The data come from the RNA Mapping Database (RMDB), library OK2TST. Chemical mapping of a 177-nucleotide RNA with DMS and 2A3. For 2A3, 1,498 sequencing reads were counted. 2A3 adducts were read by reverse transcription with SuperScript II with manganese.
[RMDB]
RNA sequence: GGGAACGACUCGAGUAGAGUCGAAAAAUUCUGCGUUUACUUGGAGUUACGUACUCGCAUCAAGUGGUUGGAAACAAAUUUUUGAAACGACAUCUGAAAACAACGCUAGGAAUUGUACCAACAGAUGACCCAUAAACAGGUUCGCCUGUUUAUGGGUAAAAGAAACAACAACAACAAC
Reactivity to DMS in 0.01 (KOAc 150mM, MgCl2 10mM, bicine 150mM(pH8.5), 24C), signal-to-noise 4, nucleotides 027 to 126: a030u000u000c010u000g000c020g020u000u010u000a030c060u010u000g010g010a040g020u010u010a110c290g010u000a020c010u000c020g000c220a180u020c020a010a010g010u010g000g010u000u000g000g000a120a070a080c040a050a080a170u000u000u010u010u010g000a050a060a110c040g000a050c040a080u000c060u000g000a090a060a050a070c150a020a020c010g000c010u010a110g020g010a020a010u000u000g000u010a290c000c030a100a120c210a080g010a110u010g000
Reactivity to 2A3 in 0.01 (KOAc 150mM, MgCl2 10mM, bicine 150mM(pH8.5), 24C), signal-to-noise 3, nucleotides 027 to 126: a000u030u010c010u010g010c000g010u030u000u060a010c020u000u000g050g000a020g020u060u040a040c090g040u090a020c030u000c020g070c050a210u210c040a150a000g010u020g090g030u110u050g070g120a100a130a040c050a080a120a220u170u200u060u070u080g080a100a070a000c020g020a010c030a060u040c090u110g060a000a030a000a070c020a010a010c000g030c050u090a050g030g060a000a000u040u020g040u050a030c020c010a020a020c010a040g220a100u150g050